Structure probing data (DMS and 2A3) for a 177-nucleotide construct.
DMS adducts were read by reverse transcription with MarathonRT.
Source: RMDB library TTRDEL, as collected in RNAgym.

RNA sequence: GGGAACGACUCGAGUAGAGUCGAAAAGAUAUGGAGCGGAUAUGGAGCUCACUCGGAAACGAGCCGAGCUAUGAAGUAUUGCGCUCCUAAGUCAAAAUCUUAGUGUGAGUUCGCUCACACUAAGAAAGACUAUAGGACUGUUCGCAGUCCUAUAGUCAAAAGAAACAACAACAACAAC
Reactivity to DMS in 0.01 (KOAc 150mM, MgCl2 10mM, bicine 150mM(pH8.5), 24C), signal-to-noise 4, nucleotides 027 to 126: g000a030u010a290u000g000g000a020g040c000g000g000a000u000a010u000g010g010a020g010c010u000c010a190c000u000c000g020g000a100a090a170c030g010a010g030c120c120g020a010g020c010u000a100u010g010a140a170g010u000a000u000u000g020c010g010c010u000c000c000u010a000a070g000u000c050a130a090a140a120u000c000u000u000a000g020u000g000u000g000a020g020u000u010c260g000c000u000c000a000c010a000c000u000a000a000g000a010a080a080
Reactivity to 2A3 in 0.01 (KOAc 150mM, MgCl2 10mM, bicine 150mM(pH8.5), 24C), signal-to-noise 6, nucleotides 027 to 126: g010a010u050a040u180g000g020a010g000c010g000g000a000u010a020u060g110g050a020g010c000u010c000a010c010u000c000g030g020a090a050a030c030g000a020g200c300c230g040a000g000c030u150a300u300g080a070a010g000u000a010u020u090g300c010g000c000u000c000c010u000a030a020g020u010c010a030a020a040a300u020c000u000u000a000g000u000g000u000g010a020g010u050u170c300g070c140u000c000a000c000a000c000u000a000a000g000a000a000a000